About this RNA
The record gives the reactivity of an RNA of 207 nucleotides to 2A3.

RNA sequence: GGGAACGACUCGAGUAGAGUCGAAAAUGACGUUUGUCUUCAGCCAUACGUUCAGCUCCAUGAUACUGGCGUAUGCUUCAAACCAAUCUGCGAGUUUGUCUUUGGGGGUGAACUGGGGCCAAUUCCGCGGGAAGGGGAGGUAGGCCAUGUGUGUGAAGGCAUCGUCCUCAUUCGUGAGGACGAUGCCAAAAGAAACAACAACAACAAC
Reactivity to 2A3 in 0.01 (KOAc 150mM, MgCl2 10mM, bicine 150mM(pH8.5), 24C), signal-to-noise 2, nucleotides 027 to 156: u180g000a000c040g040u070u060u010g100u050c070u120u080c080a060g070c130c000a000u020a000c030g030u090u300c010a050g000c040u090c050c050a120u240g040a130u070a080c020u040g070g000c000g010u020a010u040g000c000u050u010c030a040a050a020c010c010a000a020u040c060u090g020c010g010a010g030u000u230u100g070u110c060u040u060u110g050g000g000g000g000u070g030a040a030c060u010g020g090g040g000c000c000a010a060u070u030c000c030g060c080g030g000g010a020a060g020g020g000g010a040g030g040u110a050g030g030c030c020a050u100g020u000g000u020g010u000g030a090a140